[RMDB]
RNA sequence: GGGAACGACUCGAGUAGAGUCGAAAAAGCGGCGCCUUCCUGCUGCUCUUCCUGCUCGUGCUCACUGUCACCGAGCCGCUGCGGCCAGGUGCGCCGCGCGAUGGGGGCGGUGUGGGGGCUGGGCGGCCGACGGCUGAGUCUUCGGACUCAGCCGUCGAAAAGAAACAACAACAACAAC
Reactivity to 2A3 in 0.01 (KOAc 150mM, MgCl2 10mM, bicine 150mM(pH8.5), 24C), signal-to-noise 1, nucleotides 027 to 126: a020g020c030g000g010c010g020c000c080u150u160c070c050u100g010c000u010g000c010u010c030u050u070c000c040u030g000c000u000c080g030u030g000c000u010c050a230c060u220g100u300c020a000c050c080g040a040g010c000c020g000c000u100g010c040g000g000c140c010a060g150g000u020g000c120g000c020c000g000c000g000c030g040a120u080g000g000g000g070g090c150g010g070u170g000u130g060g030g000g000g030c050u020g000g000g040c000g060g040c010
Record summary
The record gives the reactivity of an RNA of 177 nucleotides to 2A3. Values cover nucleotides 27 to 126. High 2A3 reactivity points to a flexible backbone, as in loops and unpaired stretches. The 2A3 profile rests on 572 reads.